[RMDB]
The record gives the reactivity of an RNA of 177 nucleotides to DMS. Values cover nucleotides 27 to 126. DMS adducts were read by reverse transcription with MarathonRT. The reactions ran in a buffer of 150 mM KOAc, 10 mM MgCl2 and 150 mM bicine (pH 8.5), at 24 C. The DMS profile rests on 897 reads.

RNA sequence: GGGAACGACUCGAGUAGAGUCGAAAAAACACGUGGGUACGGCCCAGUGGGGGGGAGAGGGACACGCCCUGGGCUCUGGCCAGGGUGCAGCCGGACUGACUGAGCCCCUGUGCCGCCCCCAGAUAAAUAACGUCAUGGAAUUCGUUCCAUGACGUUAAAAAGAAACAACAACAACAAC
Reactivity to DMS in 0.01 (KOAc 150mM, MgCl2 10mM, bicine 150mM(pH8.5), 24C), signal-to-noise 1, nucleotides 027 to 126: a100a090c050a020c130g010u000g020g000g000u010a050c140g000g020c020c010c010a080g000u000g010g010g000g000g040g010g000a120g020a090g020g010g000a110c060a300c050g020c000c000c000u000g010g010g030c030u020c200u030g010g050c010c010a020g000g000g020u000g010c010a010g030c060c040g020g030a160c130u010g000a080c010u000g000a290g010c020c010c030c030u000g010u030g000c010c000g000c080c050c010c000c000a020g020a100u010a070a050a060